The record gives the reactivity of an RNA of 177 nucleotides to DMS and 2A3. 2A3 adducts were read by reverse transcription with SuperScript II with manganese. The 2A3 profile rests on 4,908 reads.
[RMDB]
RNA sequence: GGGAACGACUCGAGUAGAGUCGAAAAGCGGUGCGCAAGGCGGGCAUCGCGCACCUGUGAGUCGGGCCUUGGGCGGUGGGCCCCGUCCUGUCUGUCUGCCUGGGGAGCCUGCCCGGCGGGCUGACGAUAAAAUGACGUGAUUCGUCACGUCAUUUUAAAAAGAAACAACAACAACAAC
Reactivity to DMS in 0.01 (KOAc 150mM, MgCl2 10mM, bicine 150mM(pH8.5), 24C), signal-to-noise 4, nucleotides 027 to 126: g010c070g010g010u000g000c010g020c030a140a090g010g020c050g010g010g010c030a120u010c080g010c010g010c070a030c000c010u010g020u000g000a070g010u000c030g000g000g010c020c020u000u010g010g010g020c020g010g010u000g000g010g010c040c040c010c020g000u010c020c040u010g010u000c010u000g000u000c020u000g010c010c010u020g030g000g010g010a120g020c040c050u000g010c000c000c010g010g000c020g010g000g000c010u000g010a030c030g010a190
Reactivity to 2A3 in 0.01 (KOAc 150mM, MgCl2 10mM, bicine 150mM(pH8.5), 24C), signal-to-noise 2, nucleotides 027 to 126: g050c010g050g010u020g000c030g000c060a050a060g090g040c080g020g040g010c010a040u100c050g000c000g020c030a040c000c020u070g070u050g050a050g030u030c010g010g050g000c010c000u060u080g040g000g010c030g000g000u080g020g010g050c000c010c000c000g030u000c030c010u040g020u040c020u030g020u000c010u010g020c020c030u080g000g000g000g020a050g070c020c020u060g000c010c030c030g000g030c030g000g000g000c000u000g000a010c010g000a020
Overview
The RNA was probed in 150 mM KOAc, 10 mM MgCl2 and 150 mM bicine (pH 8.5) at 24 C.